[RMDB]
RNA sequence: GGGAACGACUCGAGUAGAGUCGAAAAGUUGGGGAAUUCGUUCCCCAACACUGAAUAUCUUCCGAAGCCGAACGGGAAAACCGGCAUCUAAAAAUUAAUAAAAGCUCUAUGCUUUCGAGCAUAGAAACGUUAACGGUAGAUUCGUCUACCGUUAACGAAAAGAAACAACAACAACAAC
Reactivity to 2A3 in 0.01 (KOAc 150mM, MgCl2 10mM, bicine 150mM(pH8.5), 24C), signal-to-noise 2, nucleotides 027 to 126: g000u000u010g000g000g000g060a030a030u060u030c160g050u040u040c000c020c000c010a000a010c010a010c010u000g000a040a060u080a140u150c050u120u000c010c010g000a070a010g000c000c000g010a020a000c030g190g000g180a110a300a030a060c040c030g000g020c010a010u020c020u050a060a050a240a220a240u220u300a090a140u190a150a220a040a020g010c010u000c000u020a010u000g000c000u050u050u160c230g020a010g040c000a000u010a020g000a020a050a000
Reactivity to DMS in 0.01 (KOAc 150mM, MgCl2 10mM, bicine 150mM(pH8.5), 24C), signal-to-noise 1, nucleotides 027 to 126: g030u000u000g010g000g000g010a000a000u000u000c250g000u000u010c000c000c000c010a000a000c000a080c140u000g010a150a090u040a040u010c010u000u000c030c000g050a080a090g020c000c000g020a030a050c000g010g040g010a090a050a150a110c300c030g000g030c000a080u000c090u000a010a120a190a110a160u050u010a000a070u040a080a110a080a080g000c140u010c010u000a000u000g000c000u000u000u030c160g000a000g000c000a000u030a000g000a040a040a100
The record gives the reactivity of an RNA of 177 nucleotides to 2A3 and DMS. High 2A3 reactivity points to a flexible backbone, as in loops and unpaired stretches. Source: RMDB library M2PK50, as collected in RNAgym. For 2A3 the reverse transcriptase was SuperScript II with manganese. For DMS, 530 sequencing reads were counted. The 2A3 profile rests on 1,157 reads.